Structure probing data (DMS and 2A3) for a 177-nucleotide construct. 2A3 adducts were read by reverse transcription with SuperScript II with manganese. Values cover nucleotides 27 to 126. It was measured as part of the RMDB library OK2TRN. The DMS profile rests on 1,474 reads. For 2A3, 1,233 sequencing reads were counted.
RNA sequence: GGGAACGACUCGAGUAGAGUCGAAAAAGCUGCUCCAAAUCGGCGGAAAGGACCCCGCUAUCGGGAGCGGCUAGCAGCGAGGGUUGCCGCUCCAGCCGCGCUAUGAAGCAGCCAUAGCAGAUUUACACAGUGAUAUGCCAUUCGUGGCAUAUCACUGAAAAGAAACAACAACAACAAC
Reactivity to DMS in 0.01 (KOAc 150mM, MgCl2 10mM, bicine 150mM(pH8.5), 24C), signal-to-noise 2, nucleotides 027 to 126: a070g020c000u000g010c000u000c070c050a050a120a100u010c140g000g020c000g030g020a070a070a140g000g000a190c150c060c000c010g050c040u000a040u010c190g020g000g000a020g030c000g000g000c010u000a010g010c060a040g010c120g000a070g010g000g010u010u010g010c010c010g010c010u000c000c000a170g010c120c120g020c180g010c000u000a030u000g000a090a020g000c020a020g000c010c020a010u010a050g020c020a150g010a140u010u010u020a090c220a200
Reactivity to 2A3 in 0.01 (KOAc 150mM, MgCl2 10mM, bicine 150mM(pH8.5), 24C), signal-to-noise 1, nucleotides 027 to 126: a020g010c000u000g020c010u040c070c010a000a030a120u180c060g040g010c010g020g000a090a100a140g190g060a040c020c030c020c000g000c030u100a130u180c100g090g000g000a030g000c020g020g030c020u010a000g000c050a010g040c000g110a110g070g130g010u080u060g050c000c040g000c000u000c000c000a010g040c010c050g080c030g000c010u010a020u010g040a020a030g010c000a000g040c010c000a000u000a000g000c000a030g030a130u210u150u180a050c110a010